[RMDB]
RNA sequence: GGGAACGACUCGAGUAGAGUCGAAAAUGGCACUCAGCCCCUUCUCAGAGGGUGUGUGGUCAGAAGUGCUUUCAUCUGGCAGGCUGGAGAUCCAAGCCCAACUUGGCCACUCACCAGAUGGUUUGUAAUACGCAGGAUGUUUCGACAUCCUGCGUAUAAAAGAAACAACAACAACAAC
Reactivity to DMS in 0.01 (KOAc 150mM, MgCl2 10mM, bicine 150mM(pH8.5), 24C), signal-to-noise 2, nucleotides 027 to 126: u020g010g030c030a090c100u000c090a210g020c040c000c050c040u000u010c060u010c110a150g030a140g010g040g000u020g030u000g010u000g010g000u020c060a030g010a110a140g000u000g000c030u020u000u010c060a070u010c050u020g020g010c080a120g030g020c150u000g000g000a120g000a050u000c040c080a020a030g010c040c020c090a090a160c080u000u000g020g000c010c000a020c010u000c010a050c020c000a080g000a090u000g000g020u000u000u000g010u010a090
Source: RMDB library OK2TRN, as collected in RNAgym. Structure probing data (DMS) for a 177-nucleotide construct. Reactivities are given for positions 27 through 126. The reactions ran in a buffer of 150 mM KOAc, 10 mM MgCl2 and 150 mM bicine (pH 8.5), at 24 C.